An RNA of 177 nucleotides, treated with DMS and 2A3 and read out base by base. The 2A3 profile rests on 2,316 reads.
RNA sequence: GGGAACGACUCGAGUAGAGUCGAAAAGCGAGUUUGUUCGCAAACUCGCAAAGAAACCUCGAGCGAAGGGAACCCAAACCACGCUCGAGCAAGGGACCCAAAAAAUCUACGGCUUCGGCCGUAGAAAGACGCAUUAAUUGUUCGCAAUUAAUGCGUCAAAAGAAACAACAACAACAAC
Reactivity to DMS in 0.01 (KOAc 150mM, MgCl2 10mM, bicine 150mM(pH8.5), 24C), signal-to-noise 2, nucleotides 027 to 126: g000c010g010a040g010u000u000u000g010u000u000c170g000c020a030a010a030c000u000c010g000c000a030a040a030g000a080a120a120c270c000u000c020g000a020g010c010g010a150a100g040g000g000a100a160c040c090c030a060a060a110c010c030a270c000g010c000u000c000g010a010g000c100a060a060g020g010g000a140c010c060c010a010a010a110a050a110a120u010c000u000a000c000g000g010c010u010u010c180g010g000c020c000g060u000a010g000a000a060a130
Reactivity to 2A3 in 0.01 (KOAc 150mM, MgCl2 10mM, bicine 150mM(pH8.5), 24C), signal-to-noise 1, nucleotides 027 to 126: g000c000g000a000g000u000u010u000g030u020u040c060g010c090a000a000a000c000u020c000g000c000a020a030a000g000a020a050a010c010c000u010c020g000a000g000c030g060a220a090g010g000g010a070a100c000c020c020a050a050a040c000c010a030c020g000c000u000c000g020a000g000c030a040a070g050g030g110a070c000c000c000a000a020a080a000a020a040u020c000u010a000c000g000g000c000u020u070c220g110g010c000c010g000u010a010g010a000a000a000
Source: RMDB library M2PK50, as collected in RNAgym. For DMS, 1,197 sequencing reads were counted. The RNA was probed in 150 mM KOAc, 10 mM MgCl2 and 150 mM bicine (pH 8.5) at 24 C.